[RMDB]
RNA sequence: GGGAACGACUCGAGUAGAGUCGAAAACAACCCAACUCCUACUCAAUACUUCCUCGUCGUACAGAACGGUAACAUGUUUUCCGAACAUCCGCGCUUGGGUAUACGAGUAUACACCUUACCCAACCCUCCAACCACCUAAAGUUCGCUUUAGGUGGAACCGUCGUAUAGUGUUCGCACUAUACGACGGAAAAGAAACAACAACAACAAC
Reactivity to 2A3 in 0.01 (KOAc 150mM, MgCl2 10mM, bicine 150mM(pH8.5), 24C), signal-to-noise 3, nucleotides 027 to 156: c080a010a060c000c010c020a040a050c040u050c000c020u010a060c020u020c080a040a060u040a100c020u060u080c010c020u060c030g060u050c020g040u100a050c020a080g070a180a060c020g000g000u060a050a030c040a180u130g040u060u040u050u020c040c000g010a050a020c020a130u040c020c040g060c010g000c070u000u030g070g000g000u030a010u020a050c050g010a020g060u000a030u030a040c070a040c030c020u030u090a040c010c000c000a010a020c020c000c010u050c030c010a060a080c000c000a010c000c000u000a010a000a000g030u030u060c130g070c100u020u000u000a000g000g000u000g000g000a000a000
The record gives the reactivity of an RNA of 207 nucleotides to 2A3. Source: RMDB library M2RFPK, as collected in RNAgym. For 2A3 the reverse transcriptase was SuperScript II with manganese. 2A3 is a SHAPE reagent: it acylates the 2'-hydroxyl of flexible nucleotides of all four kinds. Conditions: 150 mM KOAc, 10 mM MgCl2 and 150 mM bicine (pH 8.5), 24 C.